Structure probing data (DMS and 2A3) for a 177-nucleotide construct. The data come from the RNA Mapping Database (RMDB), library M2PK90. DMS adducts were read by reverse transcription with MarathonRT. The RNA was probed in 150 mM KOAc, 10 mM MgCl2 and 150 mM bicine (pH 8.5) at 24 C.

[RMDB]
RNA sequence: GGGAACGACUCGAGUAGAGUCGAAAAAAAGUGUACGAAAGAACAAAGAAGCAAUCAAACCGAGUAGUGAAAUGAUGGCUUCAGUGCAAAAUGGGCAAACACUACAGACGGAGCCAAAGGCAAUUAAUCACAAACCUUAAUUCGUUAAGGUUUGUGAAAAAGAAACAACAACAACAAC
Reactivity to DMS in 0.01 (KOAc 150mM, MgCl2 10mM, bicine 150mM(pH8.5), 24C), signal-to-noise 3, nucleotides 027 to 126: a060a050a070g000u010g010u000a050c060g010a050a040a070g010a100a100c100a060a080a100g030a020a030g000c040a030a040u000c030a040a080a170c120c050g000a120g000u010a070g010u000g010a080a060a110u000g000a050u000g010g000c000u000u000c020a040g010u010g010c110a000a020a060a080u000g010g010g040c050a050a050a070c040a010c030u000a020c030a070g010a090c090g010g000a080g020c050c050a010a070a100g010g000c090a060a080u000u000a060a150
Reactivity to 2A3 in 0.01 (KOAc 150mM, MgCl2 10mM, bicine 150mM(pH8.5), 24C), signal-to-noise 2, nucleotides 027 to 126: a010a030a000g080u050g000u010a030c070g090a060a120a130g100a080a020c030a020a120a050g010a000a000g040c000a000a040u020c000a010a060a040c040c040g040a030g040u110a040g000u050g080a050a050a110u050g020a000u000g010g000c000u060u030c030a020g020u010g080c010a000a030a000a200u060g040g000g000c060a020a090a000c020a010c020u070a000c020a030g110a050c060g020g040a010g040c000c000a020a000a000g020g010c030a060a070u140u040a160a050
The DMS profile rests on 2,407 reads.